The record gives the reactivity of an RNA of 177 nucleotides to DMS and 2A3. For DMS, 826 sequencing reads were counted. The reactions ran in a buffer of 150 mM KOAc, 10 mM MgCl2 and 150 mM bicine (pH 8.5), at 24 C.
[RMDB]
RNA sequence: GGGAACGACUCGAGUAGAGUCGAAAAGAGGGUCACGGAAGCGACAAUUGCCACCACGAUUGCCGGAAUGGCGGCAAUCAGCGAAAACAGGGCUACAAUGCGCACAUGCAGGCGCGACGCGGCCUUACUACGUGAGUCGUUUCGACGACUCACGUAGAAAAGAAACAACAACAACAAC
Reactivity to DMS in 0.01 (KOAc 150mM, MgCl2 10mM, bicine 150mM(pH8.5), 24C), signal-to-noise 2, nucleotides 027 to 126: g020a100g010g020g050u020c010a050c030g060g000a120a100g000c030g040a020c120a130a040u000u000g030c000c010a120c100c030a200c160g000a010u000u000g050c010c020g000g010a120a230u010g010g010c020g020g000c000a020a000u000c010a130g030c080g000a060a040a050a150c200a060g010g020g000c000u000a070c110a070a230u020g020c030g030c030a030c100a060u020g040c170a090g000g020c040g030c020g030a070c270g020c040g000g010c030c000u010u000a100
Reactivity to 2A3 in 0.01 (KOAc 150mM, MgCl2 10mM, bicine 150mM(pH8.5), 24C), signal-to-noise 2, nucleotides 027 to 126: g080a010g000g000g010u060c020a030c050g070g040a090a010g000c010g010a080c020a020a140u180u090g060c020c030a060c010c000a040c120g000a020u000u030g000c000c000g010g070a260a250u240g150g090c000g000g000c000a000a000u040c010a000g050c020g050a110a000a000a000c020a000g010g040g000c000u030a090c100a060a100u150g000c020g030c000a050c020a150u240g140c030a040g060g040c010g000c000g010a000c040g000c000g000g010c000c000u030u050a010